[RMDB]
RNA sequence: GGGAACGACUCGAGUAGAGUCGAAAAGCCUGGUAAGAAUGCCCAGGGUGGACCACGAGGAGGUCGGAGAAUUCAGUGCCACCCCGAAGAAAGAAAGACGCGACAACUGUGAGUCUUAGCAAUUUUCACUACCAAUACAGUUCGCUGUAUUGGUAGUAAAAGAAACAACAACAACAAC
Reactivity to DMS in 0.01 (KOAc 150mM, MgCl2 10mM, bicine 150mM(pH8.5), 24C), signal-to-noise 3, nucleotides 027 to 126: g030c020c000u000g000g020u020a080a080g010a120a040u000g010c050c040c070a050g010g000g040u000g000g000a080c040c050a080c040g010a110g000g000a090g000g000u000c070g010g000a110g020a090a100u000u010c050a120g020u000g000c030c010a090c020c020c000c080g000a050a070g010a080a120a110g000a070a060a060g000a080c090g000c030g000a080c130a070a040c070u030g020u000g000a090g010u000c010u000u010a080g030c190a050a110u000u000u000u010c100
Reactivity to 2A3 in 0.01 (KOAc 150mM, MgCl2 10mM, bicine 150mM(pH8.5), 24C), signal-to-noise 2, nucleotides 027 to 126: g050c010c010u010g020g000u080a120a120g080a200a060u100g010c030c020c050a030g010g000g010u020g010g000a020c060c020a020c060g000a100g050g000a040g040g040u100c130g060g030a050g060a100a090u100u100c050a040g050u030g080c010c010a000c020c000c000c000g060a130a120g040a050a110a000g070a020a020a010g010a010c000g010c060g130a030c030a170a040c050u070g010u020g090a020g020u020c000u060u040a040g060c050a090a190u050u000u050u070c040
Chemical mapping of a 177-nucleotide RNA with DMS and 2A3. The DMS profile rests on 2,036 reads. 2A3 adducts were read by reverse transcription with SuperScript II with manganese. High 2A3 reactivity points to a flexible backbone, as in loops and unpaired stretches. Source: RMDB library VIROID, as collected in RNAgym.